[RMDB]
RNA sequence: GGGAACGACUCGAGUAGAGUCGAAAACGCGGCGAUAGAGGUUCCACCAGCCGGUCCGGCCCGAGACGGCGUGGAGCGUCCCGUCGGCACGCCACUCGGGUUGGAACACCGAUUCGUCGGGACUGCCGAUCCGUCAGUGGUUCGCCACUGACGGAUCAAAAGAAACAACAACAACAAC
Reactivity to 2A3 in 0.01 (KOAc 150mM, MgCl2 10mM, bicine 150mM(pH8.5), 24C), signal-to-noise 1, nucleotides 027 to 126: c140g030c000g000g000c010g000a070u050a110g140a100g090g060u060u070c000c000a020c000c030a070g010c020c000g040g000u080c000c030g010g000c000c000c000g020a040g010a060c100g000g000c020g020u010g000g010a130g100c040g070u060c010c010c000g170u250c000g060g050c000a000c010g000c000c000a000c010u000c000g010g010g000u000u020g000g000a000a000c010a000c040c000g040a040u060u000c020g020u030c000g000g000g030a090c080u110g040c110c050
An RNA of 177 nucleotides, treated with 2A3 and read out base by base. Source: RMDB library OK1LIB, as collected in RNAgym. The reactions ran in a buffer of 150 mM KOAc, 10 mM MgCl2 and 150 mM bicine (pH 8.5), at 24 C.